[RMDB]
This 207-nucleotide RNA was probed chemically with 2A3 and DMS.
For DMS the reverse transcriptase was MarathonRT.
Values cover nucleotides 27 to 156.
Conditions: 150 mM KOAc, 10 mM MgCl2 and 150 mM bicine (pH 8.5), 24 C.
The data come from the RNA Mapping Database (RMDB), library OK3TST.
For 2A3 the reverse transcriptase was SuperScript II with manganese.
RNA sequence: GGGAACGACUCGAGUAGAGUCGAAAAUCUGGGGAUGAAGGGAGAGGGUCACGUGGAAAGCCUGAUACAGAGGUCAGCCACUUCCUCAAGGCAGGAAGAUGGACAUAGUGACUGAUGUAGCUUUUAGACCUGCCAAUCUCUGGCUCCAGGAGUGUCAAUUAUUUAUGGUCUUCGGACCAUAAAUAAUAAAAGAAACAACAACAACAAC
Reactivity to 2A3 in 0.01 (KOAc 150mM, MgCl2 10mM, bicine 150mM(pH8.5), 24C), signal-to-noise 3, nucleotides 027 to 156: u020c010u000g000g000g000g010a050u170g160a140a030g020g020g020a030g020a040g020g010g010u070c070a080c200g090u100g090g020a010a030a000g040c010c050u110g050a040u020a080c010a000g010a010g030g020u010c000a000g000c010c010a000c020u010u020c010c000u030c060a090a100g210g020c050a000g030g030a000a000g020a070u000g000g000a020c030a120u300a040g110u060g030a000c000u000g010a020u020g000u010a010g000c030u000u010u020u050a030g010a020c000c010u020g060c070c030a090a110u020c000u000c000u010g030g000c000u000c010c000a000g020g030a020g010u050g040u050c040a040
Reactivity to DMS in 0.01 (KOAc 150mM, MgCl2 10mM, bicine 150mM(pH8.5), 24C), signal-to-noise 3, nucleotides 027 to 156: u000c020u000g000g000g020g000a090u010g000a020a040g000g010g020a090g000a260g030g020g020u000c000a090c120g000u000g000g000a060a010a030g010c060c090u020g030a190u010a120c020a080g020a300g010g010u000c010a110g000c010c040a070c000u000u000c000c010u000c030a160a120g030g030c140a040g020g000a040a050g000a090u000g010g000a110c090a060u000a110g010u020g010a040c000u010g010a290u000g010u000a060g020c030u000u000u000u000a100g000a050c000c020u000g030c050c060a020a250u000c030u010c010u010g010g010c010u000c010c010a040g010g000a130g020u000g000u000c020a080